[RMDB]
RNA sequence: GGGAACGACUCGAGUAGAGUCGAAAAGUGCAACACAUACAAGGACAAAAAUGUAAGCCACUGACAUUUCUACUGCAUACAAAUUAGUAAUUAGCUCAUUCAACUCAUCGUGCAUUUGUUGAAUUCUAAACAUCUUUGCAAAUUACGAUAGAACCAACCUAUAUGGAUGCUUCGGCAUCCAUAUAGGAAAAGAAACAACAACAACAAC
Reactivity to 2A3 in 0.01 (KOAc 150mM, MgCl2 10mM, bicine 150mM(pH8.5), 24C), signal-to-noise 4, nucleotides 027 to 156: g080u050g030c040a080a030c040a020c010a060u090a070c040a050a100g090g030a070c080a060a110a010a040a020u050g020u070a060a010g020c030c010a010c040u040g020a040c040a070u120u120u030c030u040a090c030u030g000c010a040u050a090c040a050a140a100u140u080a090g050u060a030a100u070u040a030g030c010u010c080a040u100u000c030a050a050c020u020c050a010u030c060g090u050g060c050a030u030u000u040g010u010u020g040a040a040u140u060c040u100a030a070a070c040a100u040c050u080u120u120g000c010a000a050a080u050u040a050c020g030a030u030a140g020a070a020c010c010a010a030
Reactivity to DMS in 0.01 (KOAc 150mM, MgCl2 10mM, bicine 150mM(pH8.5), 24C), signal-to-noise 2, nucleotides 027 to 156: g050u000g070c040a090a150c070a120c070a050u000a080c040a060a030g020g020a080c070a070a050a110a120a080u020g000u020a040a130g000c070c040a030c040u000g010a120c080a090u000u010u000c050u010a060c080u020g050c040a170u000a110c070a030a030a100u030u000a100g030u010a020a080u000u000a040g030c050u000c070a070u000u000c010a040a110c030u010c020a050u000c030g020u010g030c090a060u000u000u000g010u040u000g010a070a050u010u000c030u010a150a040a100c090a050u010c050u000u000u000g010c020a030a050a090u000u000a020c010g000a080u010a040g000a040a120c040c020a110a190
Structure probing data (2A3 and DMS) for a 207-nucleotide construct. For DMS, 2,355 sequencing reads were counted. For 2A3 the reverse transcriptase was SuperScript II with manganese. The reactions ran in a buffer of 150 mM KOAc, 10 mM MgCl2 and 150 mM bicine (pH 8.5), at 24 C.